Chemical mapping of a 207-nucleotide RNA with DMS and 2A3. The reactions ran in a buffer of 150 mM KOAc, 10 mM MgCl2 and 150 mM bicine (pH 8.5), at 24 C. For 2A3, 11,249 sequencing reads were counted. Source: RMDB library M2RFPK, as collected in RNAgym.
[RMDB]
RNA sequence: GGGAACGACUCGAGUAGAGUCGAAAAUAGCGAAGUAGGAUUUUAUGCGUCAAGUGUUCACAGGCUGGGGAGUCGCCGUGAAACGAAAAGCAGAAAGCGUGCUGCUUGCGAUAUAAUUUCCGCACCCAUAAGAAGUCUCUGUUCGCAGAGACUUCAACCCUGUUAUAAGUUUCGACUUAUAACAGGGAAAAGAAACAACAACAACAAC
Reactivity to DMS in 0.01 (KOAc 150mM, MgCl2 10mM, bicine 150mM(pH8.5), 24C), signal-to-noise 2, nucleotides 027 to 156: u010a140g010c060g010a110a100g020u000a110g000g010a030u000u000u010u000a020u010g010c020g010u000c060a040a210g010u010g000u000u000c020a040c040a110g050g010c030u000g040g000g010g010a080g000u000c020g010c010c010g000u000g000a030a070a080c050g000a100a040a010a030g050c040a030g000a110a060a110g040c190g000u000g030c010u000g000c000u000u010g000c040g000a120u000a020u000a030a090u000u000u000c030c020g000c050a100c000c000c010a190u010a090a110g010a050a020g000u000c000u000c010u010g020u000u010c300g010c020a030g000a030g030a020c000u000u010c010a040a060
Reactivity to 2A3 in 0.01 (KOAc 150mM, MgCl2 10mM, bicine 150mM(pH8.5), 24C), signal-to-noise 7, nucleotides 027 to 156: u170a020g050c040g060a110a020g050u100a070g020g010a010u020u010u010u020a020u030g010c010g000u030c060a010a010g010u010g020u050u020c020a020c090a120g000g020c020u090g030g010g020g020a080g110u130c060g000c000c000g000u010g000a030a010a000c020g000a010a010a010a010g000c020a000g070a100a170a020g170c130g100u170g040c010u000g000c000u000u010g000c000g010a000u000a000u000a030a010u010u010u000c000c000g000c010a020c000c020c010a040u080a070a110g010a000a000g000u000c000u000c000u010g040u050u020c100g010c070a000g000a000g000a000c000u000u000c000a000a010